[RMDB]
RNA sequence: GGGAACGACUCGAGUAGAGUCGAAAAGACGGAAAAGAUCGAACCUAAGAAGAUCAGGUAGUGUAAGCCGAAUCCUAGGGCUCCUAGAGACGCAUCGUCCGAUGCGAAAUAAACACUAACGUCGAAAGAUAUGGGCUAUAUUCGUAUAGCCCAUAUCAAAAGAAACAACAACAACAAC
Reactivity to DMS in 0.01 (KOAc 150mM, MgCl2 10mM, bicine 150mM(pH8.5), 24C), signal-to-noise 6, nucleotides 027 to 126: g000a030c030g020g010a110a070a070a090g000a020u000c020g010a150a120c130c170u010a100a090g000a160a150g000a040u010c020a070g000g030u010a060g010u010g000u010a110a060g010c010c030g000a070a080u010c030c010u000a080g000g000g020c050u000c110c100u010a060g000a100g000a150c030g000c000a020u010c010g000u050c190c210g020a010u000g000c000g000a010a070a060u030a080a090a040c030a020c030u010a060a130c020g010u000c010g020a100a090a100
Reactivity to 2A3 in 0.01 (KOAc 150mM, MgCl2 10mM, bicine 150mM(pH8.5), 24C), signal-to-noise 6, nucleotides 027 to 126: g030a000c020g020g050a110a040a060a020g020a030u040c030g020a090a130c010c040u110a090a090g100a090a020g010a080u030c050a010g030g100u030a020g000u030g010u070a050a020g020c020c040g020a060a040u040c000c010u050a060g010g020g090c030u050c010c010u080a080g020a010g010a060c000g000c000a010u010c020g240u130c150c220g010a000u000g000c010g000a040a020a000u110a010a080a000c050a000c030u040a110a020c020g010u030c030g020a020a050a050
The record gives the reactivity of an RNA of 177 nucleotides to DMS and 2A3. 2A3 adducts were read by reverse transcription with SuperScript II with manganese. The DMS profile rests on 13,740 reads.